[RMDB]
RNA sequence: GGGAACGACUCGAGUAGAGUCGAAAAUAACGUACUUUCGAGUACGUUAAGUCUGCCGGCGCUAGCAGGGCUGAAGAGAAGAUGGAGGAGCUGGUGGUGGAAUUAGGGGGGGAUUCGUCCCCCCCAAACACAAGACACGUUUCGACGUGUCUUGUGUAAAAGAAACAACAACAACAAC
Reactivity to DMS in 0.01 (KOAc 150mM, MgCl2 10mM, bicine 150mM(pH8.5), 24C), signal-to-noise 1, nucleotides 027 to 126: u010a010a020c000g010u000a010c000u020u000u000c220g000a010g000u000a000c000g010u000u010a020a100g000u000c050u000g040c060c040g000g020c040g010c050u000a080g030c050a070g010g010g020c040u000g010a120a060g000a090g000a070a050g000a120u000g000g000a140g010g000a110g010c080u000g030g010u010g020g030u000g000g000a080a080u030u010a120g030g020g000g010g000g000g000a010u010u010c180g000u000c010c000c000c000c000c000c000a000a030